Notes
Chemical mapping of a 207-nucleotide RNA with 2A3. The data come from the RNA Mapping Database (RMDB), library OK3TST. Conditions: 150 mM KOAc, 10 mM MgCl2 and 150 mM bicine (pH 8.5), 24 C. 2A3 adducts were read by reverse transcription with SuperScript II with manganese. The 2A3 profile rests on 749 reads.

[RMDB]
RNA sequence: GGGAACGACUCGAGUAGAGUCGAAAACCUCACAUCCGAAAGGAUGUGAGGAUCCCUACUCGAAAGAGUAGGGUUUAUAACUAUAGCUAAACCCCUGCUAUAGCCAGCUCUCGGCAUGCACGAAAGUGGAUGGGGAGAGGUGGAAAAUUGGGGAAAAGGAUGGGUUCACGUUCGCGUGAGCCCAUCCAAAAGAAACAACAACAACAAC
Reactivity to 2A3 in 0.01 (KOAc 150mM, MgCl2 10mM, bicine 150mM(pH8.5), 24C), signal-to-noise 1, nucleotides 027 to 156: c000c000u000c000a000c000a000u000c000c000g060a070a020a010g010g000a010u020g000u000g000a000g010g010a000u010c000c000c000u000a000c000u000c010g040a130a110a080g010a000g000u000a000g000g010g000u000u160u010a070u000a000a000c000u000a000u000a000g000c000u030a010a070a300c000c000c000c000u000g000c000u000a000u000a000g020c000c020a060g020c000u000c000u000c010g300g030c060a040u130g000c000a000c000g020a120a040a030g020u010g000g160a000u010g040g000g300g000a000g010a000g030g060u010g000g080a030a000a030a060u180u120g000g000g000g000a010a040a000a040